[RMDB]
RNA sequence: GGGAACGACUCGAGUAGAGUCGAAAAGAUAUGGAUGUGGCGACCGAUAAGCGUUAUAUCGGAAACGAUAUGCGCUUUUGACGGUCCCCCACAUCCUAAGUCAAAGGUGGUGCUUCGGCACCACCAACCCAGUCUUAUCGUUCGCGAUAAGACUGGGAAAAGAAACAACAACAACAAC
Reactivity to DMS in 0.01 (KOAc 150mM, MgCl2 10mM, bicine 150mM(pH8.5), 24C), signal-to-noise 2, nucleotides 027 to 126: g010a060u000a300u020g020g010a000u010g050u000g000g020c300g010a010c010c000g030a150u000a000a000g000c000g010u000u050a010u000a000u000c000g000g010a040a030a070c020g030a000u000a000u000g010c010g000c010u000u000u000u000g000a220c120g000g000u010c030c000c300c030c000a000c010a010u010c010c000u000a000a070g010u010c010a030a050a060g000g000u000g000g000u000g010c000u020u010c220g040g000c010a000c010c000a000c000c000a020a050
Reactivity to 2A3 in 0.01 (KOAc 150mM, MgCl2 10mM, bicine 150mM(pH8.5), 24C), signal-to-noise 2, nucleotides 027 to 126: g030a020u080a040u150g000g000a000u010g010u000g030g000c000g030a000c020c020g090a110u050a220a000g000c000g060u290u300a040u000a000u020c010g010g050a090a010a030c030g000a000u000a020u020g010c020g000c010u010u010u000u010g130a110c100g010g000u010c020c000c000c000c000a000c000a000u000c000c010u010a120a040g050u040c050a150a060a050g000g000u000g000g020u000g020c000u090u170c300g130g000c000a020c010c010a010c010c000a020a010

Conditions: 150 mM KOAc, 10 mM MgCl2 and 150 mM bicine (pH 8.5), 24 C. This 177-nucleotide RNA was probed chemically with DMS and 2A3.